[RMDB]
RNA sequence: GGGAACGACUCGAGUAGAGUCGAAAAUCCUAAGUCCGUCAAGGCAACCGAAGAACUGCAUUGUCAGAGGUUCGGAAACGAACCUCUUGGAUUUAUGCAGGGAGGUUGCCGUAGCGGAUAUGGAAAACGUUGUCCCACUUUCGAGUGGGACAACGAAACUGUUAUGUAACUUCGGUUACAUAACAGUAAAAGAAACAACAACAACAAC
Reactivity to 2A3 in 0.01 (KOAc 150mM, MgCl2 10mM, bicine 150mM(pH8.5), 24C), signal-to-noise 1, nucleotides 027 to 156: u000c000c000u040a120a010g030u000c000c000g030u050c120a090a000g010g000c000a000a000c000c040g220a300a050g010a040a030c000u000g010c000a010u000u030g010u010c000a000g000a000g020g000u000u010c010g010g020a080a070a010c020g000a000a000c010c000u020c010u020u090g010g000a000u120u240u190a000u010g000c000a020g000g000g020a010g000g020u000u000g010c000c000g000u000a010g000c010g020g000a000u010a020u010g000g040a020a100a020a010c010g010u010u000g000u000c000c030c000a000c000u120u120u090c240g040a010g000u000g000g000g000a000c020a000a000c020g000a000a000
Reactivity to DMS in 0.01 (KOAc 150mM, MgCl2 10mM, bicine 150mM(pH8.5), 24C), signal-to-noise 2, nucleotides 027 to 156: u010c040c000u000a140a150g040u000c000c010g000u000c010a230a160g010g020c010a030a010c000c000g000a210a190g040a130a190c020u000g010c010a040u000u010g000u000c000a020g000a040g010g000u000u010c010g010g020a080a090a230c010g010a030a000c000c000u000c020u000u000g030g000a030u000u010u000a030u000g050c000a060g000g000g020a270g000g020u000u000g020c000c000g000u000a000g000c000g020g010a040u000a150u020g000g000a060a100a060a130c000g010u020u000g040u010c010c000c020a010c030u000u000u000c280g010a010g060u000g000g000g000a010c020a000a000c000g000a020a050